[RMDB]
RNA sequence: GGGAACGACUCGAGUAGAGUCGAAAAGAAAGUGCACGAUCAUACUGAGGUACUAUGGGUAAAACAAAUGGCCCGACUGGCUGGUCAUCCUGAAUUAGCAAGAUCAAAAGAAGGCAACUUAGCCAAAACAACCAUUGGAAUUCGUUCCAAUGGUUGUAAAAGAAACAACAACAACAAC
Reactivity to 2A3 in 0.01 (KOAc 150mM, MgCl2 10mM, bicine 150mM(pH8.5), 24C), signal-to-noise 2, nucleotides 027 to 126: g110a010a020a010g050u030g000c020a000c040g010a030u020c010a040u050a150c030u050g010a060g040g000u040a040c020u030a070u160g060g000g030u100a110a100a020a010c040a030a180a080u040g030g020c030c000c000g010a050c020u030g020g030c010u010g000g000u030c000a050u070c000c000u050g070a090a070u040u010a030g020c050a070a010g000a070u080c060a060a080a020a080g080a050a020g030g000c000a050a020c120u060u120a040g030c010c040a020a080a010
Reactivity to DMS in 0.01 (KOAc 150mM, MgCl2 10mM, bicine 150mM(pH8.5), 24C), signal-to-noise 4, nucleotides 027 to 126: g010a080a090a080g020u000g010c030a070c020g000a120u000c030a090u010a100c060u000g010a130g000g010u010a040c080u000a070u010g010g010g010u010a060a050a130a090c110a060a090a100u000g010g000c030c000c050g000a080c140u000g000g010c050u010g010g000u010c050a040u000c020c020u010g010a070a080u000u000a050g020c060a070a070g010a060u020c090a010a070a140a120g010a150a090g030g020c110a080a070c130u000u010a110g000c000c030a040a040a090